Background:
Conditions: 150 mM KOAc, 10 mM MgCl2 and 150 mM bicine (pH 8.5), 24 C. An RNA of 170 nucleotides, treated with DMS and 2A3 and read out base by base. DMS adducts were read by reverse transcription with MarathonRT. For DMS, 78,219 sequencing reads were counted.
RNA sequence: GGGAACGACUCGAGUAGAGUCGAAAACUUGUUCUCGAGGGCUUUCCUUCUUCGGUGAGCCCGCCUCUCCUCGUCGGUGAAGUCUCCCGCGCGGGUCCUCUUCCUAGGUCCGGAAUCAACCUCCAUCAUGCUUUCUAGUUCGCUAGAAAGAAAAGAAACAACAACAACAAC
Reactivity to DMS in 0.01 (KOAc 150mM, MgCl2 10mM, bicine 150mM(pH8.5), 24C), signal-to-noise 8, nucleotides 027 to 129: c050u040u050g020u010u000c040u020c020g000a140g000g000g000c020u030u020u030c000c030u030u070c120u020u040c180g000g000u000g010a030g000c020c010c020g010c040c020u020c000u030c020c040u020c080g030u000c040g040g000u000g010a080a100g010u030c010u010c030c010c040g040c050g030c100g000g000g000u020c040c040u030c020u040u030c020c000u010a090g000g010u020c000c060g030g020a090a100u030c100a090a110c050c000u000c040c020a080u030c070a090u060g010
Reactivity to 2A3 in 0.01 (KOAc 150mM, MgCl2 10mM, bicine 150mM(pH8.5), 24C), signal-to-noise 9, nucleotides 027 to 129: c020u060u110g040u120u020c020u020c040g040a110g000g030g010c010u010u020u040c010c010u080u190c090u150u170c080g010g000u020g020a010g000c000c000c000g000c000c000u020c000u010c010c000u030c020g210u030c060g150g030u050g030a050a020g020u000c010u010c010c000c000g020c010g000c020g010g020g000u040c000c000u010c000u040u020c010c010u010a040g010g020u000c020c020g020g030a020a070u080c030a030a070c000c000u020c020c010a080u100c010a030u200g040